[RMDB]
RNA sequence: GGGAACGACUCGAGUAGAGUCGAAAAGCGAGGUUAACCCGUGUGGGGAAGCCGUAGCGAAAGCGAGUCCGAACAGGGCGUUUCAGUAGCAUGCUCAAGACCCGAAGCGGAGUGAUCUAGCCAUGGGUGUGCACAGUAAGUUCGCUUACUGUGCACAAAAAGAAACAACAACAACAAC
Reactivity to DMS in 0.01 (KOAc 150mM, MgCl2 10mM, bicine 150mM(pH8.5), 24C), signal-to-noise 4, nucleotides 027 to 126: g020c030g020a160g010g010u000u000a050a300c030c010c010g020u000g030u010g000g000g000g000a200a080g020c030c010g000u020a220g010c010g000a100a110a110g010c050g000a040g010u000c000c020g000a070a130c130a130g010g010g000c040g000u010u020u000c050a080g000u010a090g010c100a030u020g010c040u000c050a070a100g020a120c020c010c030g000a110a150g010c060g010g000a060g010u000g000a100u010c010u000a090g010c010c070a160u010g000g000g000
Reactivity to 2A3 in 0.01 (KOAc 150mM, MgCl2 10mM, bicine 150mM(pH8.5), 24C), signal-to-noise 1, nucleotides 027 to 126: g000c000g040a040g060g030u160u060a110a070c000c000c050g080u220g100u230g100g010g000g000a000a020g020c000c030g020u080a000g000c000g020a000a000a000g030c010g020a010g140u010c010c070g090a100a040c040a120g060g060g000c040g000u080u100u090c020a000g030u000a010g010c060a020u100g000c000u020c050a060a020g040a090c000c000c000g040a020a000g030c020g030g000a080g040u060g030a080u080c050u070a040g000c010c050a100u100g030g000g020
The record gives the reactivity of an RNA of 177 nucleotides to DMS and 2A3. For 2A3, 1,320 sequencing reads were counted. Values are in units of 0.01, from 0 to 300, in steps of 10. The DMS profile rests on 2,595 reads. The data come from the RNA Mapping Database (RMDB), library OK2TRN.